[RMDB]
RNA sequence: GGGAACGACUCGAGUAGAGUCGAAAAUGAAAUAGCGUGUGCAAGACGCUGAUCUUGCCAUGAUCUGGAACUUUAGUGCUGAGGUCCGAGUUCCAGGGUAUCAUGACGGACCUUAGCACUAAUUAAACAUUAUUUAGCAGUUCGCUGCUAAAUAAUGAAAAGAAACAACAACAACAAC
Reactivity to 2A3 in 0.01 (KOAc 150mM, MgCl2 10mM, bicine 150mM(pH8.5), 24C), signal-to-noise 9, nucleotides 027 to 126: u160g030a040a030a050u140a060g040c020g010u020g090u130g020c010a010a000g020a010c040g060c300u090g030a280u000c000u000u010g000c000c010a010u020g030a090u040c040u070g050g070a030a060c020u010u020u020a010g000u000g000c000u000g000a000g000g000u000c010c000g010a030g050u090u040c050c020a010g050g030g030u160a100u300c080a110u120g070a030c010g000g000a010c000c000u010u000a000g000c000a000c000u000a000a000u010u050a030a010a000
Reactivity to DMS in 0.01 (KOAc 150mM, MgCl2 10mM, bicine 150mM(pH8.5), 24C), signal-to-noise 9, nucleotides 027 to 126: u010g010a100a090a130u010a050g010c020g020u000g010u010g010c020a020a010g000a020c020g020c270u010g000a100u000c000u000u000g000c000c010a020u000g000a080u010c040u000g010g010a130a140c100u000u000u000a010g010u000g010c000u000g010a010g010g010u000c000c000g000a130g010u000u010c090c050a050g000g010g010u010a050u010c070a100u000g010a160c020g010g000a010c000c000u000u000a010g000c000a000c010u000a000a000u000u010a070a070a170